[RMDB]
RNA sequence: GGGAACGACUCGAGUAGAGUCGAAAACACUCACGAUUCGUCGUGAGUGAAAGAACGCCAAAGUCACGCAAUCUUCCGCGUCAGGAAGGCGAAACGAGGUAAAAACCGGGUCCUUCGGGACCCGGAACUUAAGCCGAAAGUUCGCUUUCGGCUUAAGAAAAGAAACAACAACAACAAC
Reactivity to DMS in 0.01 (KOAc 150mM, MgCl2 10mM, bicine 150mM(pH8.5), 24C), signal-to-noise 2, nucleotides 027 to 126: c000a000c000u000c000a000c000g010a020u010u010c150g000u020c000g030u000g000a010g050u010g000a020a100a130g020a050a140c090g000c010c030a010a060a090g010u010c180a210c020g000c020a130a080u010c010u000u000c020c040g000c210g010u000c200a070g000g000a040a030g000g000c030g000a030a110a000c030g000a300g000g010u000a060a030a060a100a050c000c000g000g000g000u000c000c010u010u020c230g020g000g000a010c000c010c000g000g000a000a000
Reactivity to 2A3 in 0.01 (KOAc 150mM, MgCl2 10mM, bicine 150mM(pH8.5), 24C), signal-to-noise 1, nucleotides 027 to 126: c000a000c010u000c010a000c010g010a010u070u070c220g050u010c000g000u170g000a000g010u010g010a000a000a000g030a040a000c100g020c010c000a050a070a020g070u070c040a030c080g010c040a050a240u090c000u010u000c000c000g040c000g260u060c030a020g030g000a010a000g020g010c010g010a090a030a000c010g020a040g010g030u070a120a110a070a040a000c010c010g010g000g000u000c000c020u030u040c130g030g010g020a000c000c000c000g010g000a000a000